[RMDB]
RNA sequence: GGGAACGACUCGAGUAGAGUCGAAAAGACGGGGUAACCCCGGCAGACAGCGCGAUCUCGCGUGUUGCCCGAAAGGGAAUCGGGUUAAGAUUUCCCGAGCCGGGACGUGGCGGUUGACGGCGACGUUCAUACGAUGAUUCUUCGGAAUCAUCGUAUGAAAAGAAACAACAACAACAAC
Reactivity to 2A3 in 0.01 (KOAc 150mM, MgCl2 10mM, bicine 150mM(pH8.5), 24C), signal-to-noise 2, nucleotides 027 to 126: g030a010c030g000g000g050g040u070a080a120c000c000c000c000g000g030c020a030g000a090c020a050g070c000g020c020g080a230u110c100u220c110g000c020g020u030g040u050u110g070c000c000c000g070a070a060a000g060g010g000a030a060u020c020g000g040g070u050u180a190a040g070a210u170u080u030c000c000c000g000a010g000c020c000g020g000g000a000c020g010u030g020g030c040g010g000u060u120g070a020c030g040g030c030g000a050c040g030u040u010
Reactivity to DMS in 0.01 (KOAc 150mM, MgCl2 10mM, bicine 150mM(pH8.5), 24C), signal-to-noise 2, nucleotides 027 to 126: g010a160c140g010g000g010g010u010a100a150c110c000c060c080g030g000c010a070g000a100c020a100g000c010g010c000g000a180u030c250u010c030g050c020g000u000g000u000u000g000c000c000c030g000a070a090a190g000g020g000a060a070u000c020g010g000g000u010u000a040a170g000a020u000u000u000c000c000c010g010a120g010c060c010g000g000g010a100c100g020u010g000g020c100g000g000u000u010g000a120c080g000g020c040g000a090c080g020u010u000
Chemical mapping of a 177-nucleotide RNA with 2A3 and DMS. For 2A3, 1,637 sequencing reads were counted. DMS (dimethyl sulfate) methylates the pairing face of unpaired adenines and cytosines. It was measured as part of the RMDB library RFMREP. For 2A3 the reverse transcriptase was SuperScript II with manganese.